[RMDB]
RNA sequence: GGGAACGACUCGAGUAGAGUCGAAAAUACGAUUGACUUAGAUAAACCUACUCCCUCAAGUAGCUCCGAACCAAGAGUGAUUCUCAAAGCCAAUAAGGAUGCAUUGCAGUUGGAAGGUCCAGAUCAACAUGAAGUCGCUGUUCGCAGCGACUUCAUGAAAAGAAACAACAACAACAAC
Reactivity to DMS in 0.01 (KOAc 150mM, MgCl2 10mM, bicine 150mM(pH8.5), 24C), signal-to-noise 1, nucleotides 027 to 126: u020a120c150g020a020u000u010g000a030c050u000u000a080g020a140u010a090a040a140c120c000u000a100c090u000c040c000c030u000c050a090a060g020u000a130g030c070u000c000c000g000a090a080c050c030a040a110g000a050g000u000g000a070u000u000c060u000c020a040a050a110g000c090c040a030a000u030a040a090g000g050a060u000g030c020a110u000u010g050c060a040g000u000u000g010g020a050a000g000g010u000c020c020a050g020a060u020c080a100a130